[RMDB]
RNA sequence: GGGAACGACUCGAGUAGAGUCGAAAAUACUUAGUACGCGCGUAGUUGCAGGCAUUCCGGGUGCAUCAACUGACGCGGAAGACUUUUCCCAGAGUGUGCGCUUCAACUGGCGUGCUGAGUAGUGCACGAAUUGCACGUACGUUCGCGUACGUGCAAAAUAUACUUAUCAUUUCGAUGAUAAGUAUAUAAAAGAAACAACAACAACAAC
Reactivity to DMS in 0.01 (KOAc 150mM, MgCl2 10mM, bicine 150mM(pH8.5), 24C), signal-to-noise 4, nucleotides 027 to 156: u010a040c040u010u000a040g020u000a060c030g030c000g040c060g020u000a090g020u000u000g010c130a130g010g010c020a030u000u010c010c230g020g030g090u000g000c060a270u010c010a050a090c050u010g000a060c030g010c030g000g000a090a100g000a140c090u010u000u000u000c000c010c010a220g000a140g010u000g030u010g010c050g020c020u000u000c040a100a090c100u000g010g020c030g020u000g000c000u010g000a090g000u000a070g020u000g000c020a050c040g010a080a180u000u000g000c000a000c000g030u010a000c000g010u000u000c300g010c030g020u000a000c000g010u010g000c010a010a010a030
Reactivity to 2A3 in 0.01 (KOAc 150mM, MgCl2 10mM, bicine 150mM(pH8.5), 24C), signal-to-noise 4, nucleotides 027 to 156: u060a000c000u000u010a010g000u020a000c010g010c010g020c040g100u100a020g020u020u000g010c090a100g040g000c010a030u080u050c050c090g190g070g000u030g050c030a070u050c010a090a060c040u130g100a050c040g000c050g050g010a000a010g140a130c020u130u130u030u000c000c010c000a000g010a000g010u120g000u000g000c040g000c070u030u030c040a200a220c090u040g020g000c010g000u000g000c000u010g000a010g010u050a020g000u030g050c030a000c050g050a100a140u090u030g000c000a000c000g010u000a000c000g010u010u050c230g000c000g050u000a000c000g000u000g010c000a000a000a010

The record gives the reactivity of an RNA of 207 nucleotides to DMS and 2A3.
The reactions ran in a buffer of 150 mM KOAc, 10 mM MgCl2 and 150 mM bicine (pH 8.5), at 24 C.
For 2A3, 3,411 sequencing reads were counted.